[RMDB]
RNA sequence: GGGAACGACUCGAGUAGAGUCGAAAAACACAUUGAUCGGCAGUCAGAUCCUGGGUCAAGGCAAUUCGGCGCUGCUCAAACUUGCCCAGACCAUUGCCCUGAGCCACCACGAACGCUGGAACGGCGACGUGCACUCUGUAUUCGUACAGAGUGCACGAAAAGAAACAACAACAACAAC
Reactivity to DMS in 0.01 (KOAc 150mM, MgCl2 10mM, bicine 150mM(pH8.5), 24C), signal-to-noise 3, nucleotides 027 to 126: a090c110a090c170a060u020u000g000a050u000c020g000g010c040a100g030u000c040a100g010a050u000c060c050u000g000g040g000u010c020a060a060g040g030c080a030a070u000u010c220g030g010c040g010c100u010g000c020u000c030a080a100a120c160u000u010g000c010c000c000a150g000a080c040c080a060u000u000g020c010c020c110u020g010a140g010c010c030a060c030c020a040c080g020a040a110c110g020c060u000g000g030a100a040c090g020g010c020g030a090
Reactivity to 2A3 in 0.01 (KOAc 150mM, MgCl2 10mM, bicine 150mM(pH8.5), 24C), signal-to-noise 3, nucleotides 027 to 126: a000c060a020c020a130u060u150g040a060u090c040g060g000c020a040g020u080c030a020g020a070u040c000c050u060g000g000g070u060c020a020a050g000g000c030a030a120u070u050c100g020g050c090g020c130u110g000c030u040c050a120a160a080c000u050u060g000c000c010c000a000g020a020c000c030a050u080u060g000c000c000c000u010g010a030g040c000c030a030c060c000a040c060g190a300a040c060g050c090u060g000g080a100a070c080g040g000c010g020a060